Background
This 207-nucleotide RNA was probed chemically with 2A3. The reactions ran in a buffer of 150 mM KOAc, 10 mM MgCl2 and 150 mM bicine (pH 8.5), at 24 C.

[RMDB]
RNA sequence: GGGAACGACUCGAGUAGAGUCGAAAAAAAGUCAGUGGAAAAGUCCCUGGGGAAGAGCUCAUUCAUCGGAGACAACGGGCAAACAAGAUGUGCUGGGCCCAUAAAUUAGCAUCACUUAAGUGGCCAGAUGAGAGUUCCUCUGGGGGGCGUGUAAUCACUCCCAUUUAGCAUUCGUGCUAAAUGGGAGAAAAGAAACAACAACAACAAC
Reactivity to 2A3 in 0.01 (KOAc 150mM, MgCl2 10mM, bicine 150mM(pH8.5), 24C), signal-to-noise 1, nucleotides 027 to 156: a010a010a010g100u090c100a030g010u040g060g090a080a120a010a110g040u000c030c010c000u010g020g000g000g000a090a090g020a020g030c000u010c020a080u100u010c000a010u020c010g080g060a060g060a030c040a200a070c130g010g000g000c010a070a070a070c020a150a050g040a210u100g010u020g020c010u070g130g020g020c000c000c000a000u160a010a140a010u100u170a030g000c010a020u110c030a070c120u080u050a050a120g040u020g040g000c010c020a040g000a030u010g000a000g020a000g020u010u000c000c000u000c020u040g000g010g010g000g030g070c030g010u060g020u060a040a100u030c040a010